[RMDB]
This 177-nucleotide RNA was probed chemically with DMS and 2A3. For DMS the reverse transcriptase was MarathonRT. 2A3 is a SHAPE reagent: it acylates the 2'-hydroxyl of flexible nucleotides of all four kinds. For 2A3 the reverse transcriptase was SuperScript II with manganese.
RNA sequence: GGGAACGACUCGAGUAGAGUCGAAAACAUCUAUUCCAGAGUGCUAUGAUCUUUGGAGAAACCAGUGAGAAGAUUGACUUCGGGACUCGCAGUAAGACCCUGAUAACAAGCUUCAAGAUAGCUGAAGCAAGUCACGCGUUUUCGAACGCGUGACUUGAAAAGAAACAACAACAACAAC
Reactivity to DMS in 0.01 (KOAc 150mM, MgCl2 10mM, bicine 150mM(pH8.5), 24C), signal-to-noise 1, nucleotides 027 to 126: c080a050u110c030u080a100u040u020c000c000a000g000a030g000u020g000c040u060a130u000g030a030u030c000u000u000u040g000g000a030g000a110a030a050c050c060a020g000u000g010a130g000a030a090g000a050u020u010g000a140c020u070u000c000g000g000g010a010c040u000c030g120c300a170g020u050a130a070g030a080c090c150c000u050g030a060u000a070a060c140a000a120g070c000u000u000c020a000a060g010a070u030a120g000c100u000g000a000a030g000
Reactivity to 2A3 in 0.01 (KOAc 150mM, MgCl2 10mM, bicine 150mM(pH8.5), 24C), signal-to-noise 2, nucleotides 027 to 126: c030a010u210c030u150a300u010u000c010c000a000g000a000g000u140g070c030u130a120u300g010a180u170c000u010u040u060g000g000a000g110a120a000a000c010c000a000g080u010g030a010g050a130a000g030a020u000u150g040a030c070u040u000c030g020g000g000a010c030u020c000g180c150a050g070u090a090a000g030a080c000c020c050u080g040a030u040a080a030c100a050a000g010c000u070u080c000a000a090g070a200u070a050g060c080u020g000a030a000g110